[RMDB]
RNA sequence: GGGAACGACUCGAGUAGAGUCGAAAACAUUAGCUUCGGCAUCCCACCCUAGGGCUUCGAAAAGCUGAGAUGAGCUCAGCAAGGGAACUCAAGAGACUCAACUCAGAGAACUCAGAGAGAGAAUAAAGUAGUAUUCAACGUUCGCGUUGAAUACUACAAAAGAAACAACAACAACAAC
Reactivity to 2A3 in 0.01 (KOAc 150mM, MgCl2 10mM, bicine 150mM(pH8.5), 24C), signal-to-noise 1, nucleotides 027 to 126: c000a050u140u140a040g000c030u050u020c150g030g000c030a040u060c000c010c030a020c030c010c000u000a000g020g070g000c030u140u090c050g020a040a030a090a000g000c000u000g000a000g000a040u140g070a010g000c020u000c000a040g000c000a000a030g060g000g050a070a100c000u000c020a070a040g040a040g060a210c000u030c010a010a090c010u050c110a070g040a010g000a110a060c060u020c080a000g010a000g040a000g000a000g020a170a100u120a110a200a030
Reactivity to DMS in 0.01 (KOAc 150mM, MgCl2 10mM, bicine 150mM(pH8.5), 24C), signal-to-noise 1, nucleotides 027 to 126: c190a050u000u000a190g000c070u000u000c140g070g000c020a110u010c000c010c010a220c050c010c040u000a120g000g000g000c090u000u000c000g010a070a030a140a150g000c000u000g000a000g010a120u000g000a100g020c030u000c000a000g020c140a150a050g000g010g010a050a100c000u010c020a100a070g000a060g000a120c040u010c020a060a090c060u000c070a090g000a060g000a070a040c020u000c010a060g000a150g000a060g040a090g010a060a030u000a000a100a130
Source: RMDB library M2PK90, as collected in RNAgym. Structure probing data (2A3 and DMS) for a 177-nucleotide construct. DMS adducts were read by reverse transcription with MarathonRT.